[RMDB]
RNA sequence: GGGAACGACUCGAGUAGAGUCGAAAACGGCUAGCUCCUUGCGCAGGCCAAGCCCCGCAUAGUCGAUAGGUGUGCCAUUGGUCAAUGCAGCCACCAUGUGGUCGCGGUCGUUGGCCGAGGGGCCAAACAUCGUCGACGGAUUCGUCCGUCGACGAUGAAAAGAAACAACAACAACAAC
Reactivity to DMS in 0.01 (KOAc 150mM, MgCl2 10mM, bicine 150mM(pH8.5), 24C), signal-to-noise 2, nucleotides 027 to 126: c130g020g010c010u010a120g050c010u010c060c070u000u010g010c080g030c090a300g020g010c000c050a040a140g000c030c010c020c040g010c070a030u000a060g000u000c000g010a130u000a110g000g010u000g000u010g020c000c020a120u000u000g020g010u010c040a020a010u000g000c030a190g000c000c040a020c020c090a180u000g030u020g070g040u010c270g020c060g010g010u010c040g000u010u000g000g000c000c000g010a020g000g000g010g050c020c090a040a010a180
Reactivity to 2A3 in 0.01 (KOAc 150mM, MgCl2 10mM, bicine 150mM(pH8.5), 24C), signal-to-noise 2, nucleotides 027 to 126: c030g010g000c050u050a040g030c020u090c000c100u100u140g050c100g000c100a090g050g020c000c020a060a030g050c030c000c010c000g020c010a150u130a070g030u070c030g110a030u070a100g050g000u040g100u160g080c020c010a040u040u070g040g010u130c080a020a040u040g000c010a030g040c020c000a020c010c010a070u230g160u260g060g040u050c040g000c000g100g000u180c060g000u060u010g030g000c040c000g010a030g080g050g000g000c000c040a030a050a000

Structure probing data (DMS and 2A3) for a 177-nucleotide construct. The data come from the RNA Mapping Database (RMDB), library OK2TST. For DMS, 1,161 sequencing reads were counted. For DMS the reverse transcriptase was MarathonRT. The RNA was probed in 150 mM KOAc, 10 mM MgCl2 and 150 mM bicine (pH 8.5) at 24 C.